Record summary: The record gives the reactivity of an RNA of 177 nucleotides to DMS and 2A3. For 2A3 the reverse transcriptase was SuperScript II with manganese.
RNA sequence: GGGAACGACUCGAGUAGAGUCGAAAAUCCGGUGGAAACUACCACCAGGCUUGGGGCCGAGAGACUCAAACGGGUACGUCCGGGGUAGGAGUGAAAUCCUGUAAUCCUGGACGGACCACCAAUGGGGUCAGGAUGGUCGAUUCGUCGACCAUCCUGAAAAAGAAACAACAACAACAAC
Reactivity to DMS in 0.01 (KOAc 150mM, MgCl2 10mM, bicine 150mM(pH8.5), 24C), signal-to-noise 2, nucleotides 027 to 126: u070c000c000g080g020u020g000g040a200a140a110c200u050a200c000c000a000c030c030a180g050g000c070u000u010g010g020g030g020c030c020g000a110g000a290g000a020c000u000c020a120a160a230c270g040g000g000u000a030c000g020u050c000c000g000g010g010g000u000a010g010g000a020g010u030g030a100a180a100u000c000c020u000g020u070a090a030u020c010c000u000g000g000a000c010g000g000a010c000c000a070c050c090a030a300u010g000g000g060g000
Reactivity to 2A3 in 0.01 (KOAc 150mM, MgCl2 10mM, bicine 150mM(pH8.5), 24C), signal-to-noise 2, nucleotides 027 to 126: u020c000c000g000g030u040g050g070a170a180a130c060u110a130c020c000a000c000c010a000g010g010c040u070u100g050g020g150g000c030c020g010a040g030a010g000a050c050u010c050a170a050a060c150g000g000g000u000a000c000g000u000c030c000g000g000g000g040u070a000g010g010a000g000u080g100a020a020a070u000c000c000u050g100u260a020a100u070c000c000u000g020g010a000c010g000g000a000c000c050a050c000c000a060a060u050g020g000g010g010